[RMDB]
RNA sequence: GGGAACGACUCGAGUAGAGUCGAAAAGCCGGCCUCCAGUGGCUGGCGUGUACGAGUGGAGGCUGGCCUCCACUCACGCGUACAACGCGCGUACGAAUCGAGGCCGGCCUCAGGUGGCCUCGACACGGGCUUAUAUCCCGUUCGCGGGAUAUAAGCCAAAAGAAACAACAACAACAAC
Reactivity to DMS in 0.01 (KOAc 150mM, MgCl2 10mM, bicine 150mM(pH8.5), 24C), signal-to-noise 1, nucleotides 027 to 126: g000c000c000g000g010c030c000u000c150c300a240g000u020g000g070c020u000g000g010c000g030u010g000u000a020c040g000a000g000u000g030g010a000g000g000c020u080g000g000c000c000u000c000c120a000c000u000c000a030c000g050c050g060u000a170c300a200a050c120g000c000g020c040g000u020a120c030g040a020a090u000c300g020a000g000g000c020c000g000g000c000c050u040c030a000g000g000u000g000g000c050c000u000c010g000a090c070a170c100g000
Reactivity to 2A3 in 0.01 (KOAc 150mM, MgCl2 10mM, bicine 150mM(pH8.5), 24C), signal-to-noise 2, nucleotides 027 to 126: g000c000c010g000g000c010c040u160c120c170a160g050u110g070g010c030u010g000g020c050g020u030g020u000a060c060g000a000g020u030g020g010a000g000g010c040u040g160g160c030c000u000c000c000a010c020u000c000a000c000g010c000g000u070a160c060a160a050c170g000c000g000c000g000u030a020c130g030a050a040u050c020g000a000g000g000c000c000g010g000c000c010u040c020a010g010g060u050g010g040c010c000u010c000g000a000c000a020c020g020